The record gives the reactivity of an RNA of 177 nucleotides to DMS and 2A3. For DMS, 2,014 sequencing reads were counted. The 2A3 profile rests on 2,589 reads.
[RMDB]
RNA sequence: GGGAACGACUCGAGUAGAGUCGAAAAGAUAUGGACCAGACGCACCAUCGAUCUUACAUGUUUGUUUAACAUGCUCGGAAACGAGCAUGUUAAAUGAUAUGUAAGGGAGGUGGUCUGGUCCUAAGUCCCGAGUACUAUGGUUCGCCAUAGUACUCGGAAAAGAAACAACAACAACAAC
Reactivity to DMS in 0.01 (KOAc 150mM, MgCl2 10mM, bicine 150mM(pH8.5), 24C), signal-to-noise 1, nucleotides 027 to 126: g010a120u000a190u000g000g010a000c010c000a010g000a040c030g030c040a030c010c010a300u000c210g000a090u020c010u010u000a010c000a020u000g020u000u000u030g020u000u000u000a000a010c010a010u000g000c010u000c010g000g020a170a140a180c000g020a000g030c000a000u000g010u000u000a000a010a010u000g010a010u000a010u000g000u010a000a010g010g010g000a050g040g020u010g010g010u000c000u000g020g000u000c000c000u010a000a010g020u000c030
Reactivity to 2A3 in 0.01 (KOAc 150mM, MgCl2 10mM, bicine 150mM(pH8.5), 24C), signal-to-noise 1, nucleotides 027 to 126: g090a040u150a030u260g000g020a030c040c000a000g030a000c120g220c300a000c010c000a150u300c040g050a040u020c010u000u000a010c000a000u040g200u070u110u050g050u010u040u010a000a000c000a000u010g000c010u000c000g020g040a120a090a070c000g000a000g010c000a010u000g020u000u010a000a000a010u010g010a000u000a000u000g020u020a010a000g020g000g000a000g070g020u000g000g000u020c000u000g000g000u000c000c000u000a000a010g010u040c000
Reactivities are rounded to 0.1 and cut off at 0 and 3.